[RMDB]
RNA sequence: GGGAACGACUCGAGUAGAGUCGAAAACACCGUUAUUUUGUCGCUUAAAAUAUAACGAUUCUUAUCACUAGCCCAGCGUUUGAAUGCGAUAUCAAGCAUUGUUUUAUGGUGCAUAACAUCAACAACCCCGCAAACAGUCAAGAUCAUGAUUGCGAACAACAACUCUAACGUUCGCGUUAGAGUUGUUAAAAGAAACAACAACAACAAC
Reactivity to 2A3 in 0.01 (KOAc 150mM, MgCl2 10mM, bicine 150mM(pH8.5), 24C), signal-to-noise 4, nucleotides 027 to 156: c050a010c030c010g040u000u050a110u060u110u070u070g120u070c040g040c050u150u170a090a100a200a070u140a090u030a070a080c050g040a090u150u060c020u070u190a110u140c060a050c120u050a040g020c010c010c010a030g040c030g050u060u100u110g080a070a030u040g010c020g030a040u020a040u280c050a080a000g010c010a000u010u040g050u060u070u020u060a090u100g000g000u020g030c010a010u050a170a130c010a030u110c030a030a080c020a040a060c040c000c010c000g050c040a030a080a030c010a010g060u080c050a100a010g040a100u080c040a050u090g070a070u030u060g020c030g030a020a010c010
Reactivity to DMS in 0.01 (KOAc 150mM, MgCl2 10mM, bicine 150mM(pH8.5), 24C), signal-to-noise 2, nucleotides 027 to 156: c040a160c020c030g000u000u010a030u000u000u000u000g000u010c020g000c040u000u000a070a060a090a090u000a090u000a040a090c000g030a060u020u000c030u000u000a080u010c040a070c110u010a120g050c040c060c030a070g010c040g020u000u000u000g000a040a100u000g020c040g000a100u000a100u010c060a050a150g040c040a060u000u010g030u020u020u000u000a080u020g000g000u010g010c030a110u000a070a110c000a050u000c020a030a080c040a050a110c070c000c000c000g020c060a100a100a080c030a060g030u000c020a030a130g020a110u010c100a160u010g020a140u000u000g000c030g000a110a090c050
Overview: Source: RMDB library OK3TST, as collected in RNAgym. Chemical mapping of a 207-nucleotide RNA with 2A3 and DMS. For DMS the reverse transcriptase was MarathonRT. The reactions ran in a buffer of 150 mM KOAc, 10 mM MgCl2 and 150 mM bicine (pH 8.5), at 24 C. Values are in units of 0.01, from 0 to 300, in steps of 10. Values cover nucleotides 27 to 156.